[RMDB]
RNA sequence: GGGAACGACUCGAGUAGAGUCGAAAAGUGCCAGAGAAGUUGUAUAUUGGGCUACCAUCCAGUGAAGCAAUGGAGGCUUAUUAGGGUUGUCAGUUUUCCACAGGGUAGCAAUUAAAACUGUCUGAAAAAAACGAAACCACCUUCGGGUGGUUUCGAACGUUACUUAGUGGUUCGCCACUAAGUAACGAAAAGAAACAACAACAACAAC
Reactivity to 2A3 in 0.01 (KOAc 150mM, MgCl2 10mM, bicine 150mM(pH8.5), 24C), signal-to-noise 1, nucleotides 027 to 156: g060u050g050c030c030a020g010a000g000a300a010g030u040u030g080u100a170u050a120u250u100g040g030g000c010u020a010c000c000a020u060c020c010a030g000u050g130a090a040g000c020a020a050u020g070g010a030g080g030c000u070u110a160u110u090a230g180g030g000u000u010g030u030c000a010g020u000u020u270u100c000c050a070c010a050g010g060g000u000a000g000c020a060a070u160u070a040a000a000a000c000u000g010u000c040u000g000a010a080a020a000a000a000a000c000g000a000a000a000c010c010a000c020c000u020u020c170g070g000g000u000g090g010u000u000u000c000g000a010a000
Reactivity to DMS in 0.01 (KOAc 150mM, MgCl2 10mM, bicine 150mM(pH8.5), 24C), signal-to-noise 1, nucleotides 027 to 156: g000u000g030c050c030a050g000a190g010a120a150g010u000u000g020u000a080u000a120u000u020g000g000g040c020u000a010c040c050a190u000c010c020a120g000u000g010a110a180g000c100a090a030u000g050g020a290g020g050c040u000u000a030u010u020a060g040g040g070u010u000g030u000c000a010g000u000u010u000u000c020c060a110c040a140g000g060g020u020a050g010c020a010a100u000u000a040a040a080a040c010u000g000u010c040u000g020a010a030a030a100a070a100a190c000g010a030a010a030c000c070a010c010c000u000u010c300g050g080g070u000g060g000u000u000u000c040g000a000a030